[RMDB]
RNA sequence: GGGAACGACUCGAGUAGAGUCGAAAAUCCAGCGAGAGGCGUAGGAGAGAGGGCCGCGGUGCUCUGGAGUAGAGGCUUCUUGCUUCGAAACACCAUCGAUCGUCCCUUCUUCUUUUACCUUCUCCUGGCUCUUCGAGUGAGACGCGACCGGUGGCAUUGAUAACGGAAAGUUCGCUUUCCGUUAUCAAAAAGAAACAACAACAACAAC
Reactivity to 2A3 in 0.01 (KOAc 150mM, MgCl2 10mM, bicine 150mM(pH8.5), 24C), signal-to-noise 1, nucleotides 027 to 156: u050c000c000a000g010c170g040a000g000a010g030g040c180g030u000a000g020g010a010g000a020g010a010g020g010g000c040c010g030c000g010g020u000g010c020u000c010u000g000g000a000g010u000a000g000a000g000g020c000u210u030c050u270u300g000c000u000u010c010g030a020a010a010c000a020c120c010a000u010c000g050a300u030c000g000u000c000c000c000u060u030c020u030u030c000u000u030u030u010a000c000c000u000u000c000u000c000c000u000g010g000c010u000c010u060u030c010g020a020g030u050g020a140g020a060c050g040c050g030a100c010c020g040g030u070g060g000c000a020u020